[RMDB]
RNA sequence: GGGAACGACUCGAGUAGAGUCGAAAAACGCUUCACAAUGUGCGGCAAAGAAACAUUGUUUAUGCAAAGGCACUUCGGAAUGUGUGCUCAAACAUUGCUUAUUCAAACACGCUUCACAAUGUGCGACAAAACUUCACGGUCUUCGGACCGUGAAGAACAGAGUCUUGUCGUUCGCGACAAGACUCUGAAAAGAAACAACAACAACAAC
Reactivity to 2A3 in 0.01 (KOAc 150mM, MgCl2 10mM, bicine 150mM(pH8.5), 24C), signal-to-noise 2, nucleotides 027 to 156: a030c020g000c010u080u050c010a020c010a000a000u020g020u000g000c010g000g070c060a210a120a080g060a020a110a000c020a030u000u000g090u040u070u100a050u060g040c070a080a000a050g060g020c000a010c020u120u170c130g120g060a110a100u170g010u000g020u040g020c030u050c080a060a110a040c090a110u120u100g000c020u140u160a120u140u120c020a020a060a050c060a010c120g040c040u070u040c020a000c050a160a200u150g020u000g000c010g050a020c090a020a070a020a020c000u000u000c000a000c000g000g000u030c020u000u040c140g130g000a000c000c000g000u000g000a000a000g010a000a000
This 207-nucleotide RNA was probed chemically with 2A3. For 2A3 the reverse transcriptase was SuperScript II with manganese. Source: RMDB library M2RFPK, as collected in RNAgym. Reactivities are rounded to 0.1 and cut off at 0 and 3.